[RMDB]
Chemical mapping of a 207-nucleotide RNA with 2A3. For 2A3 the reverse transcriptase was SuperScript II with manganese.

RNA sequence: GGGAACGACUCGAGUAGAGUCGAAAACUCUUUUGCUCGGCAUGAUACCACCGUUAUCGGGUCAACAGAGUAGUUGCAAAUGACAACAAUGCUCAGGGUUAUGCUCUCGCUGCCUAAUGGCGGUGCGCGGACGACUCAAUGUUCGCAUUGAGUCGAAAGAGGCAACUAAGUUCGCUUAGUUGCCUCUAAAAGAAACAACAACAACAAC
Reactivity to 2A3 in 0.01 (KOAc 150mM, MgCl2 10mM, bicine 150mM(pH8.5), 24C), signal-to-noise 2, nucleotides 027 to 156: c020u050c000u060u040u130u200g000c080u050c070g090g000c040a020u070g030a040u080a110c000c030a060c000c040g120u060u050a100u090c060g020g000g010u100c050a000a030c030a000g010a020g020u150a030g030u010u040g030c040a050a140a210u260g090a220c000a060a000c000a080a130u180g000c000u000c000a000g080g000g000u140u100a010u030g040c010u060c010u070c040g070c020u030g040c010c000u150a300a060u190g000g020c050g040g000u020g030c030g000c070g110g050a030c010g000a000c000u000c000a000a000u040g030u060u050c230g000c130a000u000u000g000a000g000u000c000g000a000a020

Record summary: The RNA was probed in 150 mM KOAc, 10 mM MgCl2 and 150 mM bicine (pH 8.5) at 24 C.